[RMDB]
RNA sequence: GGGAACGACUCGAGUAGAGUCGAAAAUAGGUUGAAUUCGUUCAACCUACAGGCAAGCAAGCAGCGGAACGAGACAAGGCGAUAAUAAGAUAGCGCAUGCUGAUACAUCGGUCUUCGGACCGAUGAAUGUUACUUAGCCGUUCGCGGCUAAGUAACAAAAAGAAACAACAACAACAAC
Reactivity to 2A3 in 0.01 (KOAc 150mM, MgCl2 10mM, bicine 150mM(pH8.5), 24C), signal-to-noise 1, nucleotides 027 to 126: u060a000g010g010u010u000g000a010a020u060u080c170g010u040u010c010a020a000c000c000u000a010c000a010g060g000c020a000a040g020c000a030a000g000c000a000g000c000g040g010a060a030c030g010a050g000a070c030a060a050g030g000c040g050a030u040a090a040u090a100a070g130a140u140a070g040c060g020c040a080u170g040c040u040g010a030u020a160c000a000u000c000g000g000u050c000u050u010c160g130g000a000c000c000g000a020u000g000a000a000
Reactivity to DMS in 0.01 (KOAc 150mM, MgCl2 10mM, bicine 150mM(pH8.5), 24C), signal-to-noise 2, nucleotides 027 to 126: u000a010g000g000u000u010g000a040a050u010u030c270g030u000u000c000a000a000c010c000u010a020c100a040g000g000c070a060a080g000c090a080a110g000c030a030g000c030g000g000a050a090c080g030a060g000a090c140a060a060g000g000c060g020a050u010a030a120u000a070a040g010a080u000a070g000c030g050c090a060u020g030c020u000g020a110u020a200c010a000u000c000g030g000u000c000u000u010c180g000g000a000c010c000g010a000u000g000a080a050
This 177-nucleotide RNA was probed chemically with 2A3 and DMS. In probing experiments dimethyl sulfate is read out at A N1 and C N3, which are open when not base-paired. For 2A3 the reverse transcriptase was SuperScript II with manganese.